Conditions: 150 mM KOAc, 10 mM MgCl2 and 150 mM bicine (pH 8.5), 24 C. This 177-nucleotide RNA was probed chemically with 2A3 and DMS.
RNA sequence: GGGAACGACUCGAGUAGAGUCGAAAAACAGACCGCUGAUACCAGAUUUCCCUUCUUUUUCAAAUCACAUCUAUGCAGCAUUUGAGGAAGCAAGUAAGAUUUCAUCAUAUGCAAAAGAAUUCAGGGAAUCUGGAGAGGGAUUCGUCCCUCUCCAGAUAAAAGAAACAACAACAACAAC
Reactivity to 2A3 in 0.01 (KOAc 150mM, MgCl2 10mM, bicine 150mM(pH8.5), 24C), signal-to-noise 5, nucleotides 027 to 126: a000c020a010g090a040c010c040g010c090u010g020a020u030a150c050c020a030g040a130u060u050u040c010c010c000u070u020c040u010u050u040u050u070c020a040a070a070u130c070a060c020a130u050c080u170a130u240g030c070a030g030c010a030u020u010u060g010a020g010g020a020a010g010c090a060a000g090u160a180a060g040a170u040u050u000c010a070u000c020a030u120a040u140g030c020a010a070a060a050g040a040a050u080u070c050a050g070g000g060a040
Reactivity to DMS in 0.01 (KOAc 150mM, MgCl2 10mM, bicine 150mM(pH8.5), 24C), signal-to-noise 2, nucleotides 027 to 126: a100c080a140g000a080c010c030g050c050u050g000a090u000a090c050c000a120g000a090u000u000u000c000c000c020u020u010c010u000u010u010u010u060c070a010a030a120u070c090a160c060a050u000c120u030a130u030g030c130a120g000c060a020u000u000u000g030a010g000g000a000a000g040c140a020a050g040u080a050a060g000a030u030u000u000c000a010u010c010a000u010a020u000g000c040a050a060a050a000g000a140a050u000u000c160a020g000g000g010a110
It was measured as part of the RMDB library OK1LIB.